[RMDB]
RNA sequence: GGGAACGACUCGAGUAGAGUCGAAAAGAAUAAAUAGUGUCUUGGAGCGCGCGGAGUAAACAUAUAUGGUUCAUAUAUGUCCGUAGGCGCGUAAAGAAAGCGCGUCCAAGCGAGAGAAGACUCGCAACAUGCCUGCAGUGUUCGCACUGCAGGCAUGAAAAGAAACAACAACAACAAC
Reactivity to 2A3 in 0.01 (KOAc 150mM, MgCl2 10mM, bicine 150mM(pH8.5), 24C), signal-to-noise 1, nucleotides 027 to 126: g010a000a150u170a180a000a040u220a000g120u040g080u010c000u020u070g210g110a000g000c000g000c000g000c000g050g070a020g020u280a080a000a000c000a000u000a000u000a000u000g300g060u130u030c070a000u000a000u000a000u000g000u000c000c000g010u040a150g020g020c000g000c030g000u010a020a020a020g070a000a000a000g050c000g030c000g110u030c090c100a070a030g000c000g000a000g000a030g060a110a000g080a030c000u000c000g000c000a020a000
Reactivity to DMS in 0.01 (KOAc 150mM, MgCl2 10mM, bicine 150mM(pH8.5), 24C), signal-to-noise 1, nucleotides 027 to 126: g000a080a070u060a030a070a120u000a080g010u000g000u030c000u030u000g000g000a210g000c060g000c000g000c010g000g000a160g000u060a140a030a110c050a000u000a000u000a000u000g000g000u040u010c000a000u000a000u000a000u000g010u020c040c100g060u030a010g030g000c000g020c000g040u130a010a030a100g030a070a110a120g010c060g000c040g070u000c030c080a130a160g020c010g090a030g000a140g020a240a050g010a090c000u020c030g000c080a120a150
Background
Chemical mapping of a 177-nucleotide RNA with 2A3 and DMS. For 2A3, 792 sequencing reads were counted. It was measured as part of the RMDB library OK1LIB.